[RMDB]
RNA sequence: GGGAACGACUCGAGUAGAGUCGAAAAAUCAGCCUUCGUUCUGUAAACGGGGUUGGAUCCGACUCUCAUAGGCUCUCCAACCCAACUCCUACUAAAUACGUCCUCGUCGUACAGAACGGUAACAUGUAAAACGAAGGCUGCUUCGGCAGCCUUCGAACAAUGUUAAGUAGUUCGCUACUUAACAUUGAAAAGAAACAACAACAACAAC
Reactivity to 2A3 in 0.01 (KOAc 150mM, MgCl2 10mM, bicine 150mM(pH8.5), 24C), signal-to-noise 3, nucleotides 027 to 156: a010u100c040a020g050c010c010u040u050c010g000u000u000c000u000g020u040a040a040a030c020g020g000g000g010u000u000g000g000a050u250c000c010g090a120c030u080c020u030c130a180u110a230g000g000c010u010c000u000c010c000a010a000c000c000c000a010a000c020u020c010c010u060a140c050u090a100a060a110u130a080c070g110u110c030c070u050c050g080u030c020g000u010a010c000a010g010a020a010c000g010g020u050a060a050c070a080u180g050u220a010a060a050a030c000g000a010a000g000g010c000u000g010c000u030u040c060g050g000c010a000g000c000c000u000u010c000g000a000a000
Reactivity to DMS in 0.01 (KOAc 150mM, MgCl2 10mM, bicine 150mM(pH8.5), 24C), signal-to-noise 2, nucleotides 027 to 156: a140u000c050a040g030c030c020u000u000c000g010u000u000c020u020g000u000a080a080a060c030g010g020g010g010u000u010g000g010a040u000c040c010g020a060c030u000c050u000c140a140u010a140g010g010c030u000c080u020c030c030a080a040c010c020c000a040a040c030u010c020c020u000a260c060u000a080a080a130u000a080c080g030u000c020c020u000c000g000u010c060g020u010a020c000a020g020a020a040c000g000g010u010a060a060c080a110u000g020u000a060a060a120a150c010g040a040a020g010g010c040u000g000c000u010u010c230g020g050c000a020g010c000c010u000u000c000g000a030a080
Source: RMDB library M2RFPK, as collected in RNAgym. Structure probing data (2A3 and DMS) for a 207-nucleotide construct. Values cover nucleotides 27 to 156. High DMS reactivity at an A or C suggests that its Watson-Crick edge is free. The RNA was probed in 150 mM KOAc, 10 mM MgCl2 and 150 mM bicine (pH 8.5) at 24 C.